[RMDB]
RNA sequence: GGGAACGACUCGAGUAGAGUCGAAAACCAGUGGUAAUCUACUGGGACGGAACAGCUUUGAGGUGCGUGUUUGUGCCUGUCCUGGGAGAGACCGGCGCACAGAGGAAGAGAAUCUCCGCAAGAAAGGGCCUGAUCCCGUGUUCGCACGGGAUCAGGCAAAAGAAACAACAACAACAAC
Reactivity to 2A3 in 0.01 (KOAc 150mM, MgCl2 10mM, bicine 150mM(pH8.5), 24C), signal-to-noise 1, nucleotides 027 to 126: c000c000a020g000u040g060g010u200a120a070u030c000u000a000c010u010g000g000g010a000c090g000g080a050a050c000a010g060c020u220u040u140g150a140g040g030u220g040c060g060u170g010u000u250u080g060u050g060c000c000u000g010u000c000c000u090g000g180g040a020g000a000g000a010c000c010g050g000c020g000c010a070c060a040g090a000g010g010a010a120g010a010g010a040a000u060c030u020c040c020g000c010a080a020g100a050a090a010g090g000
The data come from the RNA Mapping Database (RMDB), library OK1LIB. Structure probing data (2A3) for a 177-nucleotide construct. The RNA was probed in 150 mM KOAc, 10 mM MgCl2 and 150 mM bicine (pH 8.5) at 24 C.